[RMDB]
RNA sequence: GGGAACGACUCGAGUAGAGUCGAAAAGUCCCAUACUUCGGUAUGGGACAAAUAAACUUGACUAAAGCCUGUCAAGAAUCACCACAGGCAUAGUGGUGUAAAAAACUAACUUGUUCGCAAGUUAGAACAUGGAAUUAUACUUCGGUAUAAUUCCAUGAAAAGAAACAACAACAACAAC
Reactivity to DMS in 0.01 (KOAc 150mM, MgCl2 10mM, bicine 150mM(pH8.5), 24C), signal-to-noise 6, nucleotides 027 to 126: g010u000c000c000c000a010u000a000c000u000u020c160g020g010u000a010u000g000g010g010a000c000a000a050a060u010a060a070a110c010u000u000g010a010c000u000a030a050a040g020c010c030u000g010u000c010a010a010g010a300a130u010c010a010c000c000a000c000a130g010g010c250a080u010a070g010u000g000g000u000g000u000a010a050a040a070a040a090c000u000a010a000c000u000u000g010u000u010c220g020c000a010a000g010u000u000a000g010a090a150
Reactivity to 2A3 in 0.01 (KOAc 150mM, MgCl2 10mM, bicine 150mM(pH8.5), 24C), signal-to-noise 3, nucleotides 027 to 126: g000u000c000c000c000a000u000a000c010u020u050c240g100g000u000a000u000g000g000g000a000c000a000a010a000u010a000a020a010c000u010u000g010a000c010u030a040a020a040g220c020c020u020g010u000c000a000a010g020a030a090u070c000a000c020c000a000c010a020g240g040c060a130u110a080g010u010g000g000u010g010u040a030a140a010a010a000a000c000u000a000a000c000u020u010g020u060u060c160g020c100a010a000g010u000u000a010g010a030a010
An RNA of 177 nucleotides, treated with DMS and 2A3 and read out base by base. The 2A3 profile rests on 15,021 reads. For 2A3 the reverse transcriptase was SuperScript II with manganese. For DMS, 8,804 sequencing reads were counted.